[RMDB]
RNA sequence: GGGAACGACUCGAGUAGAGUCGAAAAACUUUUAGCGUUUGCAUGACGCUGUUCUUGCAAUGAUCUGGAUUUAGCGCACGGAGGUCCGAAAUCCAGAUCAACAUUUCGGACCUCCGCGCUAAUAAAACCUACACCCUUAAUUCGUUAAGGGUGUAGGAAAAGAAACAACAACAACAAC
Reactivity to DMS in 0.01 (KOAc 150mM, MgCl2 10mM, bicine 150mM(pH8.5), 24C), signal-to-noise 5, nucleotides 027 to 126: a090c130u000u010u000u000a020g010c030g010u000u010u010g030c150a090u000g000a020c000g020c070u000g010u000u000c040u010u000g020c100a060a080u010g010a110u000c050u010g000g010a180u000u000u000a010g010c020g010c050a080c190g060g020a020g010g010u010c000c010g000a010a010a010u000c140c140a170g000a100u010c190a040a060c170a050u000u000u000c010g010g000a020c010c000u000c000c000g010c010g010c000u000a010a000u000a040a070a100a120
Reactivity to 2A3 in 0.01 (KOAc 150mM, MgCl2 10mM, bicine 150mM(pH8.5), 24C), signal-to-noise 2, nucleotides 027 to 126: a000c010u040u140u130u180a040g010c000g050u010u050u170g080c060a040u090g000a000c000g070c260u040g050u100u040c040u040u060g020c040a080a190u150g040a150u080c060u070g030g060a060u040u010u030a000g000c000g000c020a020c080g010g000a010g000g010u000c000c010g010a010a020a010u030c090c020a020g010a080u050c000a020a000c000a000u000u000u020c020g000g000a000c000c030u000c000c000g010c000g020c000u000a000a010u000a000a050a000a010